Chemical mapping of a 207-nucleotide RNA with 2A3. As a SHAPE reagent, 2A3 marks flexible, mostly unpaired nucleotides at the ribose 2'-OH. Source: RMDB library M2RFPK, as collected in RNAgym. Reactivities are given for positions 27 through 156.
RNA sequence: GGGAACGACUCGAGUAGAGUCGAAAAGUUAUGCUCUCGCUGCCUAAUGGCGGUGCGGGAAACCCACUCUAAAGUCCUUAGGGUUAGCCCCUUAAGGCGGGGUGCGGAGGCACCUGGCAACAGAAGCUGAAACUGUGCACAUUCGUGUGCACAGUAAGUUGUACCAACCCUUCGGGGUUGGUACAACAAAAGAAACAACAACAACAAC
Reactivity to 2A3 in 0.01 (KOAc 150mM, MgCl2 10mM, bicine 150mM(pH8.5), 24C), signal-to-noise 2, nucleotides 027 to 156: g090u130u090a130u250g070c000u000c000u000c010g010c020u020g020c020c030u300a300a250u150g000g010c090g000g050u010g000c000g010g020g000a020a030a030c010c010c010a050c050u190c050u120a080a040a270g300u000c000c000u000u000a000g010g000g000u010u030a000g010c000c000c000c030u000u010a000a010g000g000c010g010g020g000g000u000g000c010g010g140a090g180g000c000a000c000c000u050g170g070c010a010a010c020a070g130a070a010g010c040u130g060a240a020a020c000u000g000u000g000c000a000c010a000u040u100c160g070u050g000u000g070c000a000c000a000g010u000a000a010